[RMDB]
Source: RMDB library OK1LIB, as collected in RNAgym.
Structure probing data (DMS and 2A3) for a 177-nucleotide construct.
The 2A3 profile rests on 7,588 reads.
For DMS the reverse transcriptase was MarathonRT.
RNA sequence: GGGAACGACUCGAGUAGAGUCGAAAAAUUGGCGACAAGGUCCGAUAGAUGACGCGAAUACUUAGGGGUUGAAACGCAGUCCUUCACGGAGCACGUAGGAGGGUCAAUGAGAAUGAUCUGAAGACCCAAUUUUAAAUUAAUUCGUUAAUUUAAAAUUAAAAGAAACAACAACAACAAC
Reactivity to DMS in 0.01 (KOAc 150mM, MgCl2 10mM, bicine 150mM(pH8.5), 24C), signal-to-noise 9, nucleotides 027 to 126: a080u020u010g010g010c040g010a070c070a080a080g000g010u010c020c030g010a100u020a080g000a100u010g010a070c060g000c040g000a070a070u020a040c070u010u020a100g010g010g000g000u000u020g000a080a090a090c090g010c040a070g000u000c030c030u000u010c060a080c060g010g000a090g020c080a070c070g010u010a070g010g020a140g010g000g010u000c010a040a120u020g010a080g010a100a120u030g000a060u010c010u000g010a160a130g010a060c010c000c010
Reactivity to 2A3 in 0.01 (KOAc 150mM, MgCl2 10mM, bicine 150mM(pH8.5), 24C), signal-to-noise 7, nucleotides 027 to 126: a000u090u090g010g020c010g010a040c050a090a050g060g020u030c020c020g020a030u090a080g080a050u080g010a030c030g010c020g060a090a030u080a080c040u090u070a090g040g050g030g020u020u110g080a090a080a010c030g000c020a020g020u020c010c010u020u050c020a020c030g030g010a050g050c040a010c080g040u040a040g010g100a030g010g010g000u010c010a010a050u070g020a020g050a090a190u160g030a070u030c000u020g040a050a010g020a030c000c000c000